RNA sequence: GGGAACGACUCGAGUAGAGUCGAAAAACAGGCAACUGACGGAACAUUACUACCAUCAAAAAUAAGAGGUACUCUGUGGGAGGCCAAGAUCCAACUUAAGUCUUAGGAACCUGUGAAUCUUGGUAAGCCACAUGCGAAUAUUCGUAUUCGCAUGUGGAAAAGAAACAACAACAACAAC
Reactivity to DMS in 0.01 (KOAc 150mM, MgCl2 10mM, bicine 150mM(pH8.5), 24C), signal-to-noise 2, nucleotides 027 to 126: a080c040a020g000g000c030a040a160c030u000g000a100c060g000g040a080a070c060a050u040u010a100c180u000a160c030c000a090u000c040a030a080a050a080a090u000a040a080g000a050g020g000u000a070c060u000c080u000g030u010g060g000g020a080g000g000c010c000a010a020g000a000u010c010c010a080a080c040u000u010a070a030g040u000c010u010u010a040g010g000a090a050c050c030u000g010u020g000a020a040u000c010u000u000g000g010u000a090a170g010
Reactivity to 2A3 in 0.01 (KOAc 150mM, MgCl2 10mM, bicine 150mM(pH8.5), 24C), signal-to-noise 2, nucleotides 027 to 126: a000c020a000g050g050c010a050a030c090u060g030a020c030g070g020a110a000c050a080u080u120a050c080u040a030c000c030a160u110c060a110a080a030a060a050u160a130a040g040a040g030g010u040a070c020u030c000u090g010u100g060g010g000a030g110g000c000c000a000a010g010a000u010c020c000a000a050c030u100u070a120a030g030u020c000u060u070a050g080g010a050a040c000c020u020g030u040g080a030a040u000c000u040u000g000g010u050a060a000g000

Structure probing data (DMS and 2A3) for a 177-nucleotide construct.
The reactions ran in a buffer of 150 mM KOAc, 10 mM MgCl2 and 150 mM bicine (pH 8.5), at 24 C.
The DMS profile rests on 1,073 reads.